The record gives the reactivity of an RNA of 177 nucleotides to 2A3 and DMS. Values cover nucleotides 27 to 126.

[RMDB]
RNA sequence: GGGAACGACUCGAGUAGAGUCGAAAAGGUUAUGGCGCCAAGGCGGGCCUCUUCCCGUUUCACACCUGGCUGGCGGACGCGCACAGCCAAGCCCCCGCACCGGUGUCCGCACUGAUGAGCGGCGUGCGCUCAGCAUACGUUUCGACGUAUGCUGAGCAAAAGAAACAACAACAACAAC
Reactivity to 2A3 in 0.01 (KOAc 150mM, MgCl2 10mM, bicine 150mM(pH8.5), 24C), signal-to-noise 6, nucleotides 027 to 126: g110g010u130u070a070u270g130g000c020g000c050c040a020a040g090g010c010g010g020g020c000c010u030c020u040u040c000c010c000g030u030u130u110c120a100c030a030c020c050u030g030g010c000u000g000g030c040g010g070a130c150g040c010g000c160a090c000a280g000c000c000a010a010g000c010c010c010c010c020g000c010a030c010c060g050g010u040g030u030c020c040g070c010a040c060u120g050a160u070g040a050g020c010g020g000c020g030u060g020c030
Reactivity to DMS in 0.01 (KOAc 150mM, MgCl2 10mM, bicine 150mM(pH8.5), 24C), signal-to-noise 3, nucleotides 027 to 126: g020g010u000u020a070u020g030g020c020g010c040c030a060a120g000g010c020g000g000g000c060c040u000c050u010u000c000c000c030g000u010u040u010c110a070c140a070c040c060u000g010g050c000u000g010g000c030g010g000a120c300g010c010g000c010a130c040a060g000c020c010a060a100g020c050c040c040c020c020g020c070a050c040c070g000g010u000g000u020c070c080g000c060a060c050u020g000a110u030g000a090g010c050g000g020c070g020u010g010c110